[RMDB]
RNA sequence: GGGAACGACUCGAGUAGAGUCGAAAAGCGGCAGAGCUCCGGCAAGGGCCAGGUCGUCGAUGCGGCGAUGGUCGACGGGUCCAGCGUGCUGAUUCAGAUGAUGUGGGCGAUGCGAGCGACGGGCAUGGCGAAGGAGAGUAUUCGUACUCUCCUUCGCAAAAGAAACAACAACAACAAC
Reactivity to DMS in 0.01 (KOAc 150mM, MgCl2 10mM, bicine 150mM(pH8.5), 24C), signal-to-noise 1, nucleotides 027 to 126: g010c010g020g000c010a110g000a220g000c070u000c040c050g050g000c060a130a170g030g000g050c000c050a110g030g020u000c000g010u020c040g020a050u000g020c060g030g000c090g020a070u000g000g010u000c000g000a080c020g000g020g000u010c000c040a090g010c100g020u000g030c050u000g010a090u000u010c090a110g000a130u000g000a060u000g010u000g000g030g020c040g000a120u000g000c080g020a120g000c020g000a050c040g040g000g000c050a070u010g010
Structure probing data (DMS) for a 177-nucleotide construct. High DMS reactivity at an A or C suggests that its Watson-Crick edge is free. The reactions ran in a buffer of 150 mM KOAc, 10 mM MgCl2 and 150 mM bicine (pH 8.5), at 24 C. It was measured as part of the RMDB library OK2TRN. For DMS, 955 sequencing reads were counted.